[RMDB]
RNA sequence: GGGAACGACUCGAGUAGAGUCGAAAAGCAUACUGGUUCGCCAGUAUGCAAAACUCCUAAAGUGGAGGGCACAGCGUGAGGCUGGUUUCACAGAGCAGCGACAACCUCCCGCUCUUGUCAGUGGAUGGAUAAAAAGGGUCGUGUUUCGACACGACCCGUAAUUUUUUGAGUUCGCUCAAAAAAUUACAAAAGAAACAACAACAACAAC
Reactivity to DMS in 0.01 (KOAc 150mM, MgCl2 10mM, bicine 150mM(pH8.5), 24C), signal-to-noise 2, nucleotides 027 to 156: g020c000a020u000a000c010u000g000g030u000u000c300g030c020c020a030g000u000a010u000g020c010a030a010a070a120c060u010c000c010u000a080a080a120g010u000g010g010a060g000g030g010c070a110c100a070g000c020g010u000g010a130g000g010c020u000g000g030u000u010u000c090a270c070a110g010a050g030c070a150g010c060g000a110c040a100a050c020c020u000c020c010c010g020c010u000c030u000u000g020u000c000a120g010u010g030g010a140u020g010g020a230u000a040a090a080a140a150g020g000g000u020c000g050u000g000u010u010u010c210g000a100c000a000c040g000a000c010c000c000
Reactivity to 2A3 in 0.01 (KOAc 150mM, MgCl2 10mM, bicine 150mM(pH8.5), 24C), signal-to-noise 2, nucleotides 027 to 156: g000c000a000u000a000c000u010g000g050u040u060c090g040c060c010a000g000u000a000u010g000c000a000a000a000a010c030u050c010c000u110a100a160a030g110u130g030g020a040g010g010g000c120a030c030a080g030c010g020u050g040a020g000g070c030u040g070g010u040u150u120c090a080c000a020g070a030g050c040a010g020c020g070a040c100a040a090c010c010u020c000c010c010g010c010u050c010u090u120g090u080c020a040g020u050g070g070a100u060g060g030a050u110a170a110a030a090a110g020g000g000u010c010g030u040g010u010u090u070c060g030a010c000a000c000g000a010c000c000c000